[RMDB]
Annotation:
An RNA of 177 nucleotides, treated with DMS and 2A3 and read out base by base. For DMS, 726 sequencing reads were counted. The reactions ran in a buffer of 150 mM KOAc, 10 mM MgCl2 and 150 mM bicine (pH 8.5), at 24 C. Source: RMDB library OK1LIB, as collected in RNAgym.

RNA sequence: GGGAACGACUCGAGUAGAGUCGAAAAAACACCUGCUUUCCGCCAAACAUUAUAUCCGUGGUGCGUUUCAGACUGGAAGAGAAUUAUUAGAAAGGACCAGUCAGAGAUAGUACUCUUCCUUAAUCAAGCAUAGCAGUGGUUUCGACCACUGCUAUGCAAAAGAAACAACAACAACAAC
Reactivity to DMS in 0.01 (KOAc 150mM, MgCl2 10mM, bicine 150mM(pH8.5), 24C), signal-to-noise 1, nucleotides 027 to 126: a070a080c060a110c000c000u010g000c100u000u000u000c040c000g040c220c000a170a070a040c130a060u050u000a060u010a030u000c160c000g060u000g040g000u000g100c260g000u000u000u000c090a160g030a100c300u030g030g020a110a000g070a200g000a030a040u000u030a060u000u000a010g010a270a030a040g000g000a070c060c030a000g030u000c000a020g000a170g000a040u000a000g000u040a000c030u000c010u070u000c000c000u000u100a040a170u000c300a060a160
Reactivity to 2A3 in 0.01 (KOAc 150mM, MgCl2 10mM, bicine 150mM(pH8.5), 24C), signal-to-noise 2, nucleotides 027 to 126: a000a000c060a010c000c000u040g050c050u010u040u000c000c000g000c000c030a160a000a000c060a000u140u060a240u030a050u100c020c000g150u120g000g000u000g020c060g040u040u070u020c060a060g000a060c120u020g000g000a030a010g010a000g060a020a110u080u130a010u160u110a150g290a150a170a100g150g050a050c020c120a000g010u000c000a000g000a020g050a050u050a020g010u040a170c050u020c000u060u080c000c000u000u100a170a070u180c200a220a060